[RMDB]
RNA sequence: GGGAACGACUCGAGUAGAGUCGAAAAGUGUUGAUUAUACUAAGAAGUUUCUUACAGUUGACGGUGUGCAAUAUUAUUGCUACACGUCUAAGGACACUUUAGAUGAUAUCUUACAACAGGCUAAUAAAUAGGCGUAACUUCGGUUACGCCAAAAGAAACAACAACAACAAC
Reactivity to 2A3 in 0.01 (KOAc 150mM, MgCl2 10mM, bicine 150mM(pH8.5), 24C), signal-to-noise 3, nucleotides 027 to 129: g050u020g000u010u010g040a040u020u010a010u000a070c000u000a060a060g010a040a000g040u000u000u100c000u000u010a020c080a220g070u080u110g120a000c080g000g040u040g040u000g050c010a000a000u000a140u300u090a050u180u000g000c000u050a000c020a050c000g000u000c000u000a020a000g010g010a020c010a040c040u010u000u010a010g010a030u010g010a000u020a010u120c020u030u170a060c000a040a000c000a000g030g040c040u070a110a000u100a110a120a040u090a070
Reactivity to DMS in 0.01 (KOAc 150mM, MgCl2 10mM, bicine 150mM(pH8.5), 24C), signal-to-noise 2, nucleotides 027 to 129: g090u010g040u030u030g020a080u120u000a160u030a130c020u010a120a240g020a090a100g000u000u000u040c040u010u060a100c160a220g000u020u110g110a040c070g000g150u030g080u050g040c040a030a000u020a020u090u020a090u020u000g040c010u100a010c030a020c050g030u020c000u030a030a100g010g000a040c190a000c040u030u000u010a000g050a070u030g080a000u030a070u010c140u000u020a140c060a000a090c040a040g030g000c080u010a170a070u090a000a000a000u100a120
About this RNA:
This 170-nucleotide RNA was probed chemically with 2A3 and DMS. It was measured as part of the RMDB library 15KLIB. In probing experiments dimethyl sulfate is read out at A N1 and C N3, which are open when not base-paired. For DMS the reverse transcriptase was MarathonRT. The DMS profile rests on 3,689 reads. For 2A3, 3,704 sequencing reads were counted.